[RMDB]
RNA sequence: GGGAACGACUCGAGUAGAGUCGAAAAGAUAUGGAUCCUCCACGAAGUCGUUGAAAUCGGAAACGAUGGAGACUGAGUGGAGGGAUCCUAAGUCAAACGCGAACUUGCGUUCGCGCAAGUUCGCGAACUAUUUAAUAAGCUUCGGCUUAUUAAAUAGAAAAGAAACAACAACAACAAC
Reactivity to 2A3 in 0.01 (KOAc 150mM, MgCl2 10mM, bicine 150mM(pH8.5), 24C), signal-to-noise 1, nucleotides 027 to 126: g040a020u100a090u160g010g000a000u030c000c000u030c000c000a000c010g030a030a010g000u000c030g170u300u070g010a010a030a000u000c010g020g060a140a020a050c020g020a010u050g000g000a000g000a000c000u000g010a010g010u000g020g000a000g030g000g000a000u020c000c020u010a140a000g050u010c120a120a010a100c040g050c010g060a020a000c030u030u050g010c050g130u100u210c300g000c000g090c080a050a030g020u030u010c030g000c000g000a000a010
Reactivity to DMS in 0.01 (KOAc 150mM, MgCl2 10mM, bicine 150mM(pH8.5), 24C), signal-to-noise 2, nucleotides 027 to 126: g000a050u000a300u010g010g010a020u000c000c000u000c010c010a000c010g000a300a040g000u000c000g030u020u000g030a090a100a010u000c000g010g010a130a130a210c010g020a030u010g000g000a080g000a020c000u000g000a300g010u000g000g000a000g010g000g000a000u000c000c000u000a020a050g020u000c040a070a130a170c010g050c010g010a000a020c010u000u000g010c040g000u000u020c130g020c000g010c030a030a060g000u000u000c000g060c020g000a030a070